[RMDB]
RNA sequence: GGGAACGACUCGAGUAGAGUCGAAAAACUGUCAUACGUGGCAGAAACACGCCUUACCAGGACUAAACAGCGUGUCUAAAAAACAGUCCUUCAUACCUGAUCUGGAGGGUAGAUCAGGAAUACUAAAAAAAUCGGGUGAAGUUCGCUUCACCCGAAACACUACUCGGACGUUCGCGUCCGAGUAGUGAAAAGAAACAACAACAACAAC
Reactivity to 2A3 in 0.01 (KOAc 150mM, MgCl2 10mM, bicine 150mM(pH8.5), 24C), signal-to-noise 1, nucleotides 027 to 156: a010c000u000g000u000c010a010u020a080c160g100u030g000g030c000a000g000a010a010a000c010a000c000g010c010c000u020u070a010c010c030a010g000g000a020c030u070a160a040a030c010a000g010c040g020u010g020u010c250u130a000a010a010a010a000a000c010a020g010u000c080c000u020u030c070a100u180a150c000c000u000g000a000u000c010u020g120g000a120g080g140g000u070a010g000a010u000c000a000g000g040a000a040u100a050c050u100a030a000a030a000a030a030a080u020c010g000g000g000u000g000a000a000g010u100u090c180g060c080u020u010c010a000c010c000c000g000a000a000a000
The record gives the reactivity of an RNA of 207 nucleotides to 2A3. For 2A3 the reverse transcriptase was SuperScript II with manganese. The RNA was probed in 150 mM KOAc, 10 mM MgCl2 and 150 mM bicine (pH 8.5) at 24 C.